RNA sequence: GGGAACGACUCGAGUAGAGUCGAAAAGAUAUGGAUAUGAAUUCUUUUGACGGAGAAGUCGGAAACGACGGCUCCGAUAAGAAUCAUAUCCUAAGUCAAAACGUCAUCAUGUUCGCAUGAUGACGAACCAUCGUGACAACUUCGGUUGUCACGAUGGAAAAGAAACAACAACAACAAC
Reactivity to 2A3 in 0.01 (KOAc 150mM, MgCl2 10mM, bicine 150mM(pH8.5), 24C), signal-to-noise 1, nucleotides 027 to 126: g020a000u040a000u070g010g000a000u000a000u000g110a260a300u050u000c040u050u170u210u300g210a080c030g000g000a000g010a020a000g000u000c010g000g010a020a020a040c000g010a000c050g000g000c010u000c000c000g000a030u020a180a000g010a000a000u000c000a000u000a000u000c000c000u000a040a010g010u040c020a020a020a070a100c020g000u000c000a010u000c000a010u010g080u080u160c270g000c180a000u060g020a000u000g010a000c010g020a000a000